An RNA of 177 nucleotides, treated with DMS and 2A3 and read out base by base. It was measured as part of the RMDB libraries RFM100 and RFMREP. Values cover nucleotides 27 to 126. 2A3 adducts were read by reverse transcription with SuperScript II with manganese. The RNA was probed in 150 mM KOAc, 10 mM MgCl2 and 150 mM bicine (pH 8.5) at 24 C.

RNA sequence: GGGAACGACUCGAGUAGAGUCGAAAAGCGAUCUGGCUGCGACAUCUGUCACCCCAUUGAUCGCCAGGGUUGAUUCGGCUGAUCUGGCUGGCUAGGCGGUGUCCCCUUCCUCCCUCACCGCUCCAUGAUCUGCUCUCAGUUUCGACUGAGAGCAGAUAAAAGAAACAACAACAACAAC
Reactivity to DMS in 0.01 (KOAc 150mM, MgCl2 10mM, bicine 150mM(pH8.5), 24C), signal-to-noise 3, nucleotides 027 to 126: g020c080g020a030u010c030u010g010g000c050u000g000c090g000a070c060a150u030c070u040g000u000c060a090c080c300c010c010a080u000u030g010a050u000c060g050c000c040a080g000g010g020u000u010g010a130u020u010c050g000g030c060u020g020a110u000c070u000g020g000c050u000g000g020c230u010a090g030g000c010g020g000u010g000u000c030c020c010c050u000u020c030c020u010c010c010c000u010c010a030c020c020g000c020u030c090c040a130u060g000
Reactivity to 2A3 in 0.01 (KOAc 150mM, MgCl2 10mM, bicine 150mM(pH8.5), 24C), signal-to-noise 4, nucleotides 027 to 126: g010c020g000a040u030c020u070g030g010c030u050g040c050g040a020c010a110u140c110u140g060u050c020a080c000c020c000c000a050u010u200g040a050u040c010g020c010c010a040g000g020g040u070u100g080a140u150u060c060g000g000c000u050g030a110u010c030u040g050g000c030u010g000g020c030u040a060g020g010c010g010g030u020g000u040c000c000c000c010u040u030c000c000u010c000c000c000u020c000a040c000c020g020c020u060c040c010a060u110g020